The data come from the RNA Mapping Database (RMDB), library M2PK90. The record gives the reactivity of an RNA of 177 nucleotides to DMS. For DMS, 9,666 sequencing reads were counted.
RNA sequence: GGGAACGACUCGAGUAGAGUCGAAAAGUUUUUAACGCGUGUGCACCCGCUAACACGAAUUACCCAGUUAUUUUCGAGUUUACUCGAGUCGUUAUAGCGUGAGUUGGCGGAGUUCUCCGCGAAAUAAAACUGUCCAUUAAUUCGUUAAUGGACAGUUAAAAGAAACAACAACAACAAC
Reactivity to DMS in 0.01 (KOAc 150mM, MgCl2 10mM, bicine 150mM(pH8.5), 24C), signal-to-noise 5, nucleotides 027 to 126: g010u010u010u000u010u000a040a060c160g010c010g020u000g010u000g000c070a080c060c030c050g010c020u000a070a040c020a030c020g000a090a080u010u000a100c080c050c050a120g010u000u010a080u000u000u000u000c000g010a030g000u000u000u000a020c000u000c000g010a000g010u000c000g010u000u000a030u000a090g010c050g010u000g000a060g010u000u000g000g010c010g010g000a100g010u000u010c060u000c010c010g020c010g010a030a060a060u000a050a070